[RMDB]
RNA sequence: GGGAACGACUCGAGUAGAGUCGAAAAUCUUCAGGAAUUCUUUAGCAUCCAGAGUCUAGGCCUGGGGUUUUUAUUCUCUCUCAUCACCAAAGGCUCUCAUAUAUCGUUUUACCAACCUUAAGUACUACUUACAGAGUCAUUUCGAUGACUCUGUAAGAAAAGAAACAACAACAACAAC
Reactivity to 2A3 in 0.01 (KOAc 150mM, MgCl2 10mM, bicine 150mM(pH8.5), 24C), signal-to-noise 1, nucleotides 027 to 126: u020c010u230u170c010a000g000g070a070a110u130u050c000u060u190u060a080g000c020a050u000c020c050a060g040a030g120u020c030u090a050g000g160c030c000u000g070g010g000g020u000u000u000u110u080a130u170u000c010u000c000u050c010u000c050a080u000c010a000c020c020a050a030a040g000g010c000u020c030u020c040a040u090a010u010a030u120c030g040u030u060u070u110a050c010c010a050a030c040c010u080u040a110a020g050u110a130c020u130a010
Reactivity to DMS in 0.01 (KOAc 150mM, MgCl2 10mM, bicine 150mM(pH8.5), 24C), signal-to-noise 2, nucleotides 027 to 126: u000c010u000u000c020a030g010g010a180a070u000u000c040u000u010u000a110g040c020a090u000c080c110a110g000a120g030u000c070u010a090g010g000c060c020u000g010g000g010g000u000u000u000u000u040a090u020u000c030u000c030u020c060u010c030a030u000c100a050c070c040a040a050a130g010g020c020u000c040u000c050a040u010a090u020a100u010c060g020u000u010u000u010a120c030c020a080a090c100c040u010u010a080a060g000u000a080c110u010a130